[RMDB]
RNA sequence: GGGAACGACUCGAGUAGAGUCGAAAAACGUAAAGUCGAGUGGCUGCACACCUCACUAGGCCGCAGCUGCGGCGAGUGCCACAAAACACAACACGCACGUAGCGGGCACUCGAUGAGACGAGGCGAGACCUAAAGCUUUAUUCGUAAAGCUUUAGGUAAAAGAAACAACAACAACAAC
Reactivity to DMS in 0.01 (KOAc 150mM, MgCl2 10mM, bicine 150mM(pH8.5), 24C), signal-to-noise 9, nucleotides 027 to 126: a080c040g020u000a040a080a300g010u000c010g010a070g030u000g010g010c010u000g000c020a130c150a120c090c040u000c150a080c130u010a080g020g020c120c060g010c010a140g020c120u000g020c010g000g000c010g010a030g010u000g010c100c070a070c130a040a100a080a070c100a060c110a070a070c110a100c120g010c100a070c140g010u000a080g020c100g000g000g010c000a020c010u000c000g010a030u000g000a140g000a040c020g000a110g000g010c070g010a150g010
Reactivity to 2A3 in 0.01 (KOAc 150mM, MgCl2 10mM, bicine 150mM(pH8.5), 24C), signal-to-noise 9, nucleotides 027 to 126: a000c030g020u060a140a040a040g010u010c020g020a020g020u010g060g110c010u020g000c020a040c010a030c040c020u080c030a110c110u110a050g180g000c030c040g010c040a070g050c070u200g000c010g010g000c010g010a010g000u010g020c020c010a180c030a080a070a060a010c110a020c020a110a100c060a020c110g080c020a050c130g050u040a030g020c030g000g020g000c000a000c010u000c000g010a020u080g030a010g030a010c020g010a030g070g100c050g020a050g070

This 177-nucleotide RNA was probed chemically with DMS and 2A3. For 2A3, 33,548 sequencing reads were counted.